[RMDB]
Chemical mapping of a 177-nucleotide RNA with DMS and 2A3. For 2A3, 9,738 sequencing reads were counted. DMS adducts were read by reverse transcription with MarathonRT.
RNA sequence: GGGAACGACUCGAGUAGAGUCGAAAACACGGUUCACGCCGCUGGCGCUGUUCGGCACCGACCGCCGGCUGGCCGAGCUCAAGGAUGAUCUGGCCGGUGUCGGCGCGCCGUACUAUCGAGCGUCGGCCCCAUUAAGCAAGUUCGCUUGCUUAAUGGGAAAAGAAACAACAACAACAAC
Reactivity to DMS in 0.01 (KOAc 150mM, MgCl2 10mM, bicine 150mM(pH8.5), 24C), signal-to-noise 5, nucleotides 027 to 126: c090a140c130g000g010u000u010c120a100c200g010c050c050g020c040u010g010g000c010g000c040u010g030u000u000c020g020g030c010a110c020c010g010a030c060c070g040c020c010g000g000c020u000g020g010c090c030g000a090g010c180u010c190a110a150g000g000a130u000g010a110u010c030u000g000g010c000c000g000g010u000g000u000c000g010g010c080g010c160g010c010c010g000u000a040c080u010a120u010c180g010a080g000c010g000u000c010g000g010c060
Reactivity to 2A3 in 0.01 (KOAc 150mM, MgCl2 10mM, bicine 150mM(pH8.5), 24C), signal-to-noise 5, nucleotides 027 to 126: c050a020c050g060g030u200u150c080a040c140g040c030c020g010c040u000g000g000c020g000c030u040g030u080u040c000g000g010c020a010c010c020g020a020c030c080g040c010c000g000g000c010u020g030g020c010c020g050a040g070c080u100c160a090a090g130g030a120u220g030a090u140c020u040g000g000c000c010g000g000u030g000u010c000g000g000c040g010c070g000c010c010g000u000a010c000u060a060u200c120g110a020g030c010g000u010c020g010g000c000